[RMDB]
RNA sequence: GGGAACGACUCGAGUAGAGUCGAAAAGAUAUGGACCUGAACUACGCUUGAAACAGGCGUUGAAAAGAUUUGCUUCGGAAACGAAGCAAAUCUUGGAGCCUGGAGUACGAGCGCAGGUCCUAAGUCACUUUCAUAUAAAGUUCGCUUUAUAUGAAAGAAAAGAAACAACAACAACAAC
Reactivity to 2A3 in 0.01 (KOAc 150mM, MgCl2 10mM, bicine 150mM(pH8.5), 24C), signal-to-noise 3, nucleotides 027 to 126: g030a010u050a040u130g000g000a000c010c020u000g020a090a060c130u250a060c300g000c000u020u040g000a050a020a000c000a000g000g000c040g090u210u260g110a230a200a000a000g010a000u010u000u010g000c010u010u000c000g020g000a090a080a050c000g000a000a000g000c000a010a010a000u010c000u000u010g010g110a000g000c000c000u000g000g000a000g010u010a020c180g000a000g000c010g000c000a000g010g010u000c010c000u000a050a000g000u000c000a010
Reactivity to DMS in 0.01 (KOAc 150mM, MgCl2 10mM, bicine 150mM(pH8.5), 24C), signal-to-noise 7, nucleotides 027 to 126: g010a050u010a300u010g000g010a010c000c000u000g000a120a110c150u010a300c020g010c010u000u000g000a270a240a260c010a010g000g010c000g010u010u020g010a190a090a010a010g000a010u000u000u000g000c010u000u000c000g000g000a090a080a150c000g000a010a010g000c000a000a000a000u000c000u000u000g010g010a190g020c000c000u000g000g020a070g010u010a090c260g000a010g010c010g010c010a000g000g000u000c000c010u000a000a060g010u010c030a230
The record gives the reactivity of an RNA of 177 nucleotides to 2A3 and DMS. The RNA was probed in 150 mM KOAc, 10 mM MgCl2 and 150 mM bicine (pH 8.5) at 24 C. DMS adducts were read by reverse transcription with MarathonRT. For 2A3, 12,539 sequencing reads were counted.